RNA sequence: GGGAACGACUCGAGUAGAGUCGAAAAGAUAUGGAGGUAGAGGACCAGUACUUGGAAAUCGGAAACGAUGGAGUACGGUCUACCCACCUACCUCCUAAGUCAAAACGUUAGCCUUCGGGCUAACGAACUUUUCGACAAAGUUCGCUUUGUCGAAAAGAAAAGAAACAACAACAACAAC
Reactivity to DMS in 0.01 (KOAc 150mM, MgCl2 10mM, bicine 150mM(pH8.5), 24C), signal-to-noise 2, nucleotides 027 to 126: g000a070u030a300u000g010g000a000g010g010u000a020g030a080g000g000a000c000c000a060g080u000a000c000u020u000g020g000a090a110a030u000c000g020g000a150a070a150c010g000a010u000g030g000a030g020u010a000c000g020g030u000c000u000a020c060c050c080a300c100c000u000a000c000c000u000c000c010u000a020a080g020u000c040a090a080a160a180c020g000u000u010a000g010c000c000u000u000c230g060g000g000c000u000a000a000c010g000a040a060
Reactivity to 2A3 in 0.01 (KOAc 150mM, MgCl2 10mM, bicine 150mM(pH8.5), 24C), signal-to-noise 1, nucleotides 027 to 126: g050a040u120a110u260g000g000a000g030g000u030a020g000a010g020g000a010c040c090a140g030u010a000c030u020u110g200g300a180a290a030u030c010g000g000a070a050a020c030g000a000u060g160g010a030g000u020a000c020g010g000u020c000u020a060c000c000c000a020c000c000u020a000c020c000u020c000c010u000a050a010g100u070c060a070a000a140a190c040g010u010u010a000g020c000c000u050u070c300g020g040g000c000u000a000a000c000g000a010a000